The record gives the reactivity of an RNA of 207 nucleotides to 2A3 and DMS. Source: RMDB library OK3TST, as collected in RNAgym. 2A3 adducts were read by reverse transcription with SuperScript II with manganese. The RNA was probed in 150 mM KOAc, 10 mM MgCl2 and 150 mM bicine (pH 8.5) at 24 C.
RNA sequence: GGGAACGACUCGAGUAGAGUCGAAAAGCAGUUGCCACAGCAGUUUUUUGCCAAGCAAGAGAGUUCAGCGCCACAGCUUCAAGAGCAGCUUGCUUAGAGGCCAUUCACACAUUUUAGUUAGCAUUAGCAUUGCCAAGCAAGGCGCAGGCAGAGAGAGGAUACGAUUACCUUUCGAGGUAAUCGUAUCAAAAGAAACAACAACAACAAC
Reactivity to 2A3 in 0.01 (KOAc 150mM, MgCl2 10mM, bicine 150mM(pH8.5), 24C), signal-to-noise 3, nucleotides 027 to 156: g010c040a030g020u080u050g010c030c040a040c040a050g030c020a030g000u030u020u020u080u150u090g000c000c020a030a020g020c030a030a020g060a010g000a010g070u110u080c060a040g030c030g010c040c040a110c000a050g020c020u100u090c120a150a020g040a050g070c040a020g050c020u060u080g000c000u010u050a040g040a060g090g000c020c020a060u100u110c040a020c000a000c000a080u070u090u020u150a110g040u020u060a030g000c040a080u060u050a070g010c050a050u060u130g020c040c010a020a020g000c000a020a110g030g000c040g000c010a010g010g020c010a000g040a000g010a000g000a010g070
Reactivity to DMS in 0.01 (KOAc 150mM, MgCl2 10mM, bicine 150mM(pH8.5), 24C), signal-to-noise 2, nucleotides 027 to 156: g040c050a100g020u000u000g020c000c040a060c090a150g010c050a100g000u000u000u000u000u010u000g040c080c030a140a130g010c040a060a120g000a120g030a120g020u000u010c000a100g000c040g030c010c040a090c050a150g000c030u000u020c070a090a090g000a200g020c040a100g020c040u010u000g050c000u010u000a100g010a120g030g000c020c030a110u000u000c090a050c080a070c060a110u020u000u000u000a080g030u000u000a080g030c070a080u000u000a150g000c050a190u020u000g010c050c030a070a090g030c050a120a040g000g050c150g020c040a120g000g010c000a030g020a070g000a130g010a100g010